[RMDB]
RNA sequence: GGGAACGACUCGAGUAGAGUCGAAAAAGUCAUCGGCGCUGGUGCCGUCUUUGCCUUAUACAUGCUCUGGAGGAGCAUAUUCAACCUCACAUCCGUGUUUGUGAACCUGUCCGGUGCUAUGGCCGAGAAUAGAGGCCGUUUUCGAACGGCCUCUAUUAAAAGAAACAACAACAACAAC
Reactivity to DMS in 0.01 (KOAc 150mM, MgCl2 10mM, bicine 150mM(pH8.5), 24C), signal-to-noise 1, nucleotides 027 to 126: a050g000u000c080a070u000c040g000g000c040g050c120u000g020g020u000g000c050c050g020u020c050u010u000u010g010c100c020u000u020a100u010a080c130a040u000g000c010u000c010u000g000g010a120g040g000a060g030c060a080u010a010u010u000c160a110a110c130c030u010c040a060c060a070u010c070c070g030u000g020u000u010u000g000u040g000a070a170c090c040u000g000u000c090c030g000g030u000g000c010u000a070u000g010g010c000c010g010a110g000